Structure probing data (DMS and 2A3) for a 207-nucleotide construct.
The reactions ran in a buffer of 150 mM KOAc, 10 mM MgCl2 and 150 mM bicine (pH 8.5), at 24 C.
DMS adducts were read by reverse transcription with MarathonRT.
The DMS profile rests on 10,531 reads.
It was measured as part of the RMDB library OK3TST.

RNA sequence: GGGAACGACUCGAGUAGAGUCGAAAAGCGCAUGGAAUCCUAGACUGCUUCACGCUGUUCAAAGACUUCCUUUGGCGCGAAUAUGGGAUUCGUGUAUCUGACUACGAACGAGAGGAUGAUUGGUGGGAGAAAGGCCAGGACCUUUACAGCAUGGAUACCUAGCUAGUAUAUUCGUAUACUAGCUAGGAAAAGAAACAACAACAACAAC
Reactivity to DMS in 0.01 (KOAc 150mM, MgCl2 10mM, bicine 150mM(pH8.5), 24C), signal-to-noise 4, nucleotides 027 to 156: g010c090g020c020a120u000g010g010a060a070u010c010c000u000a300g000a140c040u000g020c070u000u000c090a110c120g020c010u010g020u000u000c020a050a110a100g000a060c070u000u010c000c030u000u000u000g030g020c000g050c010g000a040a070u000a110u000g010g000g020a130u000u000c030g030u010g000u000a100u000c050u010g010a160c040u000a090c040g010a060a080c060g020a160g010a080g000g010a070u010g000a130u000u010g000g000u010g000g020g000a120g010a040a060a060g000g010c040c050a120g020g010a050c020c030u000u000u000a070c040a090g010c050a060u010g000g010a170u000a100
Reactivity to 2A3 in 0.01 (KOAc 150mM, MgCl2 10mM, bicine 150mM(pH8.5), 24C), signal-to-noise 7, nucleotides 027 to 156: g020c020g010c020a020u050g060g020a010a010u010c000c010u020a030g030a060c050u080g090c060u260u210c170a090c150g000c030u050g020u190u070c020a020a040a050g020a100c090u060u080c010c000u070u060u090g070g000c000g000c000g010a020a010u120a060u080g040g000g010a040u030u020c030g000u030g020u050a080u050c050u060g090a090c040u050a040c080g100a150a010c030g000a030g000a010g070g010a010u030g010a030u010u080g010g020u030g010g000g000a040g010a050a050a020g050g000c020c030a030g020g030a100c020c010u040u060u070a080c050a020g020c020a040u070g040g040a040u050a080